[RMDB]
RNA sequence: GGGAACGACUCGAGUAGAGUCGAAAAUCACGUGUCGUCGAAUGGUGUUUCAUAAAAUGUAAGUAACGCUGUGUCCAAGUGCUCUAGGCGUGCCGUGUGAUGAGAGUCACACUGACGUUGUGGUGUUGCUAUCAGGAUUUGGUACGGCAAUCGGCGAGAAGCAUAAUCCCUUCGGGGAUUAUGCUUCAAAAGAAACAACAACAACAAC
Reactivity to DMS in 0.01 (KOAc 150mM, MgCl2 10mM, bicine 150mM(pH8.5), 24C), signal-to-noise 1, nucleotides 027 to 156: u000c060a000c070g030u000g010u000c020g100u020c020g050a150a130u010g030g020u030g010u020u000u000c030a110u000a090a060a080a090u000g000u000a110a090g030u000a050a090c060g000c020u020g000u000g030u000c010c080a010a110g070u000g020c010u000c050u000a120g020g030c030g030u000g010c030c060g030u000g020u010g010a010u010g020a300g000a300g010u000c020a010c000a020c020u000g020a010c020g010u010u000g030u010g040g060u020g000u010u000g000c020u000a140u010c010a160g030g000a150u010u000u020g010g000u000a050c030g030g040c040a110a080u000c020g000g000c060g030a160
Reactivity to 2A3 in 0.01 (KOAc 150mM, MgCl2 10mM, bicine 150mM(pH8.5), 24C), signal-to-noise 3, nucleotides 027 to 156: u110c040a020c090g090u100g040u110c000g000u010c020g020a030a030u060g120g050u030g080u010u100u010c080a080u150a130a120a060a050u150g040u120a050a120g040u030a040a000c020g000c030u020g010u010g050u090c030c030a100a000g060u070g050c000u030c010u090a060g040g000c000g020u040g230c040c020g010u020g000u000g000a020u040g040a020g000a020g030u010c000a010c000a010c040u030g020a000c040g030u020u010g110u020g070g000u010g010u050u110g050c020u100a070u280c050a060g050g010a030u000u020u060g030g020u030a000c020g040g000c000a010a060u080c010g040g010c010g010a040